[RMDB]
RNA sequence: GGGAACGACUCGAGUAGAGUCGAAAAAAGACCUGAGGGGUACGUCCGGGGUAGGAGUGAAAUCCCGUAAUCCUGGACGGACCACCGGUGGCGAAAGCGCCUCAGGAAGACGGAUCCGACGGUGAGGAUGUGUCUGUGUUUUCGAACACAGACACAUAAAAGAAACAACAACAACAAC
Reactivity to 2A3 in 0.01 (KOAc 150mM, MgCl2 10mM, bicine 150mM(pH8.5), 24C), signal-to-noise 2, nucleotides 027 to 126: a000a000g070a000c000c030u020g060a020g010g020g000g010u040a000c010g000u000c000c010g010g000g010g000u030a040g000g000a010g010u080g100a070a080a050u030c010c010c010g000u050a000a020u090c000c000u010g000g010a000c000g000g010a000c010c000a030c000c010g000g000u060g050g000c050g050a120a090a010g100c010g030c000c000u000c000a020g070g040a050a030g050a010c100g000g020a060u050c010c010g030a050c070g010g090u060g040a050g070g010
Reactivity to DMS in 0.01 (KOAc 150mM, MgCl2 10mM, bicine 150mM(pH8.5), 24C), signal-to-noise 2, nucleotides 027 to 126: a090a000g000a110c000c000u010g000a090g020g020g010g040u000a020c000g020u000c000c000g010g010g010g010u010a160g000g000a010g010u020g030a200a140a140u020c020c000c100g020u030a050a040u010c000c000u010g000g000a010c010g000g000a010c000c000a010c050c010g010g030u030g020g000c010g010a060a100a080g010c000g030c020c000u010c010a030g000g010a150a120g010a110c110g020g000a040u010c010c020g000a110c040g000g010u000g000a090g000g020